[RMDB]
Annotation:
Source: RMDB library OK2TST, as collected in RNAgym. The record gives the reactivity of an RNA of 177 nucleotides to DMS and 2A3. The RNA was probed in 150 mM KOAc, 10 mM MgCl2 and 150 mM bicine (pH 8.5) at 24 C. For DMS the reverse transcriptase was MarathonRT. Reactivities are given for positions 27 through 126. For DMS, 7,106 sequencing reads were counted.
RNA sequence: GGGAACGACUCGAGUAGAGUCGAAAAUGUAUAGGUUGAGACAUCUUGAGAAGGGCAUUGAGUUGUGGAUUAAUAAGGACCAAGAGGUCGCAAAGAUCUUCAUCAUUCUUGAACAACUCACAAAGAACUUAGUAUUUGAAUUCGUUCAAAUACUAAGAAAAGAAACAACAACAACAAC
Reactivity to DMS in 0.01 (KOAc 150mM, MgCl2 10mM, bicine 150mM(pH8.5), 24C), signal-to-noise 7, nucleotides 027 to 126: u010g010u010a080u010a090g010g010u010u000g000a150g000a080c050a040u000c040u000u000g020a080g010a100a140g000g010g020c080a070u000u000g010a040g010u000u000g020u000g000g010a110u000u010a040a100u010a080a090g000g000a040c040c060a130a150g010a090g030g010u000c000g000c120a080a080a200g010a020u000c020u010u000c050a080u010c180a090u000u000c050u000u000g010a060a060c050a030a040c020u000c030a060c230a080a080a110g000a070a180
Reactivity to 2A3 in 0.01 (KOAc 150mM, MgCl2 10mM, bicine 150mM(pH8.5), 24C), signal-to-noise 3, nucleotides 027 to 126: u080g020u020a120u100a150g070g030u010u060g010a020g000a040c000a040u010c020u040u100g020a080g010a050a040g040g000g020c030a040u040u130g030a010g020u020u000g010u010g010g020a010u000u080a050a080u100a120a110g030g000a000c000c030a060a050g090a110g060g020u030c000g000c200a110a090a010g020a010u000c000u080u010c040a060u030c010a070u110u060c030u050u040g000a010a010c000a010a020c000u020c030a020c040a020a120a050g080a060a010